The record gives the reactivity of an RNA of 177 nucleotides to DMS and 2A3.
Reactivities are given for positions 27 through 126.
The RNA was probed in 150 mM KOAc, 10 mM MgCl2 and 150 mM bicine (pH 8.5) at 24 C.
The DMS profile rests on 1,258 reads.
The 2A3 profile rests on 659 reads.
Source: RMDB library RFMREP, as collected in RNAgym.
[RMDB]
RNA sequence: GGGAACGACUCGAGUAGAGUCGAAAAGUGACAUGGUGCCGAAGACAAUAGCUGGCAAGAUUUUUGGUUCAAUAUGCUCCUUGAGUGGAGUCUUAGUGAUUGCUCUGCCAGUUCCUGUAAUUGUCUCCAUCGUAUACCCCUUCGGGGGUAUACGAUGAAAAGAAACAACAACAACAAC
Reactivity to DMS in 0.01 (KOAc 150mM, MgCl2 10mM, bicine 150mM(pH8.5), 24C), signal-to-noise 1, nucleotides 027 to 126: g020u020g000a060c090a030u010g000g040u010g010c070c080g000a060a030g000a050c080a040a050u000a070g010c020u010g010g010c020a030a040g000a090u010u000u000u010u010g010g000u000u010c020a060a070u010a050u000g000c000u000c010c000u000u000g020a240g000u010g000g000a000g000u000c120u000u000a040g020u000g010a050u010u000g020c160u000c060u000g000c000c000a010g000u000u000c060c090u000g010u030a100a040u000u000g010u000c020u010c110
Reactivity to 2A3 in 0.01 (KOAc 150mM, MgCl2 10mM, bicine 150mM(pH8.5), 24C), signal-to-noise 1, nucleotides 027 to 126: g060u000g080a000c070a250u040g010g000u040g120c040c000g040a060a030g000a040c000a030a020u020a040g040c000u000g030g000c000a030a180g000a030u080u090u080u160u270g080g010u090u010c020a050a050u000a050u150g000c000u000c040c010u180u060g120a090g300u080g220g000a020g010u040c040u030u080a040g000u020g040a000u050u130g000c040u010c000u030g000c060c000a020g000u010u000c000c010u040g040u050a000a070u010u040g020u020c000u000c020